[RMDB]
RNA sequence: GGGAACGACUCGAGUAGAGUCGAAAAUGCCGGAAUUUCCUGCGCAAAGCCGCCCACAAGUUUUGCUGCUUUAUGCGGUGGCUGGGUCAAGACUGCACCUGUUUUCUUCAGCCUAUCGAGGGGAGGGAAACGGCAUGUCAUUCGUGACAUGCCGUUUAAAAGAAACAACAACAACAAC
Reactivity to DMS in 0.01 (KOAc 150mM, MgCl2 10mM, bicine 150mM(pH8.5), 24C), signal-to-noise 2, nucleotides 027 to 126: u000g020c020c010g000g010a130a110u000u000u000c020c010u000g040c110g020c020a030a070a080g000c000c030g030c020c010c030a040c180a080a080g000u000u020u010u010g000c130u000g000c030u020u000u010a070u030g000c080g000g050u010g000g020c010u000g010g010g000u000c110a070a040g010a090c050u000g000c010a100c140c030u000g000u010u010u000u010c020u000u000c050a070g030c010c010u000a100u010c140g000a090g000g000g000g000a110g000g010g000